[RMDB]
RNA sequence: GGGAACGACUCGAGUAGAGUCGAAAAAACGAUGAACACUAGGUUGGGGGGGCUUGUUCCUCCCAGCCGUAGCGAAAGCGUUAAGUGUUCCGCCUGGGGAGUAUGGUCGCAAGGCUGAAACUCAAAGCUGUAAUUCGGGAUUCGUCCCGAAUUACAGAAAAGAAACAACAACAACAAC
Reactivity to 2A3 in 0.01 (KOAc 150mM, MgCl2 10mM, bicine 150mM(pH8.5), 24C), signal-to-noise 2, nucleotides 027 to 126: a000a000c070g020a060u070g010a010a000c000a010c010u020a030g000g020u000u000g000g000g010g020g010g000g010c070u120u130g100u270u060c000c000u000c000c000c000a000g020c000c000g000u010a010g010c010g010a050a000a000g000c000g020u090u100a010a000g020u000g000u000u000c000c010g050c000c000u030g000g010g030g000a000g000u080a040u260g040g000u040c010g020c060a100a080g000g000c000u000g050a060a010a020c010u010c000a120a130a000g050
Reactivity to DMS in 0.01 (KOAc 150mM, MgCl2 10mM, bicine 150mM(pH8.5), 24C), signal-to-noise 2, nucleotides 027 to 126: a020a090c080g020a120u000g000a030a000c000a000c000u010a200g000g020u000u000g010g000g000g010g020g020g000c040u040u000g000u050u000c000c030u000c000c010c000a010g030c000c000g050u020a010g000c020g000a110a070a200g010c010g020u000u000a050a080g020u010g000u000u020c000c050g000c000c000u030g020g030g000g010a010g020u000a110u060g000g010u000c000g000c260a140a130g000g010c000u000g000a080a070a110c010u020c000a060a120a110g020